[RMDB]
RNA sequence: GGGAACGACUCGAGUAGAGUCGAAAACUUUUACAGAUAAGAAAGCAGUGUACAAGGAAGUUAACUAACUUGCCCAAAGUCCCACAGUCAGUCUGAGUUUGGAGGCAAGCUUUAGUCUAUCUGUCCUCAAAGGUGUUAUUGCAAAUUCUGCUUCCUAGUCCUAUUUAUGGUUCGCCAUAAAUAGGACAAAAGAAACAACAACAACAAC
Reactivity to DMS in 0.01 (KOAc 150mM, MgCl2 10mM, bicine 150mM(pH8.5), 24C), signal-to-noise 3, nucleotides 027 to 156: c050u010u000u010u000a300c060a200g010a100u000a070a180g010a130a040a070g000c010a120g000u000g010u000a120c110a070a090g010g000a220a080g000u010u000a040a040c040u000a050a040c010u000u000g000c000c010c010a070a120a080g010u000c010c010c020a180c050a130g020u010c190a110g000u010c030u000g020a110g000u000u010u000g020g040a160g020g010c010a040a060g010c030u010u010u000a020g030u000c060u000a050u010c030u000g000u000c020c000u000c050a060a050a150g010g020u000g000u000u000a050u010u010g000c030a080a080a200u000u000c100u000g000c030u000u000c000c010u000a300
Reactivity to 2A3 in 0.01 (KOAc 150mM, MgCl2 10mM, bicine 150mM(pH8.5), 24C), signal-to-noise 3, nucleotides 027 to 156: c010u080u150u160u220a080c050a030g050a070u220a210a070g060a110a070a040g030c020a000g020u070g020u070a070c060a090a020g000g010a010a030g030u000u030a040a000c010u010a010a010c010u010u020g020c010c000c010a020a080a020g090u030c050c080c020a120c010a020g120u180c010a030g010u020c020u030g030a040g090u030u100u100g100g050a070g010g080c010a010a010g000c010u060u060u040a020g010u000c040u030a070u000c020u070g300u080c000c000u050c000a090a120a060g200g000u070g050u110u160a100u080u110g010c020a010a010a100u070u020c010u020g040c020u020u010c020c000u020a050
This 207-nucleotide RNA was probed chemically with DMS and 2A3. Conditions: 150 mM KOAc, 10 mM MgCl2 and 150 mM bicine (pH 8.5), 24 C. It was measured as part of the RMDB library OK3TST. DMS adducts were read by reverse transcription with MarathonRT.